[RMDB]
RNA sequence: GGGAACGACUCGAGUAGAGUCGAAAACGUGACCGGGGGUAACCCUGGCCGGGCACAGGCCCACCUGGGUUAGCCCGCCUGAGAAUGCAUACAUGCUACGAUGAGGGCGGGUGUUACGGGUGGGCCAAUUAAAGUGUUGUUUCGACAACACUUUAAUAAAAGAAACAACAACAACAAC
Reactivity to 2A3 in 0.01 (KOAc 150mM, MgCl2 10mM, bicine 150mM(pH8.5), 24C), signal-to-noise 9, nucleotides 027 to 126: c030g030u040g100a200c000c000g010g000g000g010g060u120a070a140c020c000c000u010g020g000c010c000g010g030g010c070a070c050a140g010g000c010c000c000a000c000c000u030g040g000g100u100u050a010g010c000c000c000g000c000c000u040g010a050g070a120a070u160g010c010a030u090a290c050a090u230g010c010u020a050c060g260a230u130g060a090g000g000g000c000g000g000g000u050g010u020u070a010c010g000g000g000u010g000g000g000c000c000a000
Reactivity to DMS in 0.01 (KOAc 150mM, MgCl2 10mM, bicine 150mM(pH8.5), 24C), signal-to-noise 9, nucleotides 027 to 126: c050g010u020g010a070c010c010g000g000g010g000g010u050a100a150c020c000c000u000g000g010c020c010g000g010g010c130a110c170a120g010g000c000c000c000a020c000c000u000g000g010g000u030u010a280g000c000c010c000g010c000c000u000g000a110g010a210a090u020g000c000a070u020a170c300a140u010g010c010u000a240c090g000a130u040g010a240g000g000g020c010g010g000g010u000g000u010u020a030c010g010g000g010u000g010g000g010c010c010a000